[RMDB]
RNA sequence: GGGAACGACUCGAGUAGAGUCGAAAACACUAGCAGCUUAAUACCCUGCUCAGAGCCCUUCCUCCCUAGCUUCCGCUUGUAAGACGGGGAAAUCAGGAAGGUCAAACCAAAUCAAGCUGGCGUGGAUUCCCCCACCUGAGGGAUGAAGCGCGAGAUCGUCUUAAAGUCUGUUCGCAGACUUUAAGACAAAAGAAACAACAACAACAAC
Reactivity to 2A3 in 0.01 (KOAc 150mM, MgCl2 10mM, bicine 150mM(pH8.5), 24C), signal-to-noise 1, nucleotides 027 to 156: c040a000c070u070a000g000c010a010g000c010u070u010a060a000u030a180c000c010c000u010g020c020u050c130a070g010a090g100c000c000c030u000u000c000c000u020c000c010c000u020a020g050c030u000u000c010c010g000c050u020u070g020u050a000a030g030a080c050g000g020g000g070a000a070a070u240c060a020g010g000a010a000g040g010u000c000a000a020a190c030c000a060a000a080u100c010a020a000g040c020u100g050g020c050g000u000g000g010a010u000u000c000c000c020c000c010a210c060c100u150g070a190g020g000g000a000u000g010a010a010g020c000g000c040g000a000g000a030u110c030
Source: RMDB library ARCHII, as collected in RNAgym. Chemical mapping of a 207-nucleotide RNA with 2A3. The RNA was probed in 150 mM KOAc, 10 mM MgCl2 and 150 mM bicine (pH 8.5) at 24 C. Values cover nucleotides 27 to 156. For 2A3, 685 sequencing reads were counted. For 2A3 the reverse transcriptase was SuperScript II with manganese.